RNA sequence: GGGAACGACUCGAGUAGAGUCGAAAAUUGGCUGAGUACACCUCCAUUGCCAACUUUGUUCUUUUUUUGUUGGGAUGUAAGCACAAUAGUUUUGAGGAACCUAACACAAUAAAAGGAGAGGAGGACAACCGGUAUGGAAGUUCGCUUCCAUACCGGUAAAAGAAACAACAACAACAAC
Reactivity to 2A3 in 0.01 (KOAc 150mM, MgCl2 10mM, bicine 150mM(pH8.5), 24C), signal-to-noise 1, nucleotides 027 to 126: u010u020g020g000c030u080g030a000g100u070a060c060a090c110c010u000c020c010a100u030u150g050c000c000a020a010c000u030u110u160g060u050u050c000u130u000u010u000u000u020u030g000u000u000g020g010g010a040u090g090u200a110a030g120c050a040c060a080a130u130a150g130u100u060u060u180g150a060g040g020a060a010c000c000u050a090a000c030a010c030a050a150u050a050a070a000a000g000g000a070g020a020g040g020a010g020g000a000c010a000
Reactivity to DMS in 0.01 (KOAc 150mM, MgCl2 10mM, bicine 150mM(pH8.5), 24C), signal-to-noise 1, nucleotides 027 to 126: u000u000g040g000c010u010g010a030g010u020a140c190a180c070c020u000c010c100a090u000u010g000c000c030a010a010c020u010u020u010g000u010u010c020u000u000u000u000u000u000u000g030u020u000g000g060g000a070u000g000u010a060a050g020c030a020c070a060a060u000a100g020u000u000u040u010g000a120g000g000a300a070c050c000u010a020a020c120a080c180a000a040u010a050a010a080a050g000g000a040g020a130g050g000a060g000g000a070c120a080